Description: Source: RMDB library OK1LIB, as collected in RNAgym. This 177-nucleotide RNA was probed chemically with 2A3. The reactions ran in a buffer of 150 mM KOAc, 10 mM MgCl2 and 150 mM bicine (pH 8.5), at 24 C. For 2A3, 307 sequencing reads were counted.

RNA sequence: GGGAACGACUCGAGUAGAGUCGAAAAAUUUAUUAAAUUGUUCAUUCAUAUCACCAUUAUUAUCAACAUGUUUUUGAACAACUUUUAAAAACCCAUCAGCAUAAUGGAAUAAUUUAUUGAUUAAUUCUCCAUAGCACUCAUUCGUGAGUGCUAUGGAAAAAGAAACAACAACAACAAC
Reactivity to 2A3 in 0.01 (KOAc 150mM, MgCl2 10mM, bicine 150mM(pH8.5), 24C), signal-to-noise 1, nucleotides 027 to 126: a000u050u110u030a000u000u030a060a170a000u000u000g000u000u000c000a040u020u000c020a050u040a110u140c060a060c090c080a040u050u240a020u200u100a130u290c060a020a140c040a110u080g020u080u140u020u020u020g020a000a000c000a000a000c030u180u000u040u040a030a120a000a000a030c020c050c000a020u070c050a000g030c070a060u100a300a000u300g060g060a020a060u050a160a100u120u130u180a040u080u110g080a060u000u010a060a200u150u000c050